[RMDB]
Chemical mapping of a 207-nucleotide RNA with 2A3. The reactions ran in a buffer of 150 mM KOAc, 10 mM MgCl2 and 150 mM bicine (pH 8.5), at 24 C. For 2A3, 471 sequencing reads were counted. For 2A3 the reverse transcriptase was SuperScript II with manganese.
RNA sequence: GGGAACGACUCGAGUAGAGUCGAAAAGAUUAUGUGGGAGAUGCGCCCGGUCGUGUCACUGGAAACAGAAUUGCGAGUCGCUCGCUCUAGCGAUAUUGAUGUGUACUGUAGCGUACACUGUGCUACUUUAAGGUAUCAUGACGAUACCACGUCAAAACAGUCGAUGAUCAUUCGUGAUCAUCGACUGAAAAGAAACAACAACAACAAC
Reactivity to 2A3 in 0.01 (KOAc 150mM, MgCl2 10mM, bicine 150mM(pH8.5), 24C), signal-to-noise 1, nucleotides 027 to 156: g020a090u120u030a040u190g070u160g140g000g000a040g000a020u000g000c000g000c110c040c010g000g080u100c040g000u010g070u070c020a020c120u030g000g000a000a030a070c050a020g060a100a070u180u150g090c050g020a000g060u040c000g000c010u000c000g010c120u070c040u140a020g060c000g010a030u000a010u080u130g090a100u090g000u000g000u070a020c040u000g070u220a060g160c050g020u050a010c020a010c110u010g060u100g040c020u040a050c000u090u100u060a160a080g000g000u000a000u040c010a120u080g090a100c170g000a030u010a000c000c000a000c020g090u080c040a000a000a090a080